[RMDB]
RNA sequence: GGGAACGACUCGAGUAGAGUCGAAAAAAAGAUAUGGACCAUGGAGAAGUCGCGCUCCCGUUGAUCAGCUUUCGGAAACGAAAGCUGGGAGGGAGCGAACUACGACGUAACAUGGUCCUAAGUCAAACUCCUAAGACGAGUUCGCUCGUCUUAGGAGAAAAGAAACAACAACAACAAC
Reactivity to DMS in 0.01 (KOAc 150mM, MgCl2 10mM, bicine 150mM(pH8.5), 24C), signal-to-noise 1, nucleotides 027 to 126: a110a110a060g000a010u000a120u000g000g010a030c010c010a000u000g010g000a120g020a140a230g020u000c000g000c000g000c000u010c000c000c000g000u000u000g020a170u000c020a010g000c000u010u000u000c000g000g000a020a010a050c000g030a020a000a030g010c000u010g020g000g000a040g030g010g030a040g010c000g050a000a020c220u020a300c020g000a010c000g000u000a070a180c030a010u000g010g010u000c000c000u000a010a020g000u000c000a140a040a090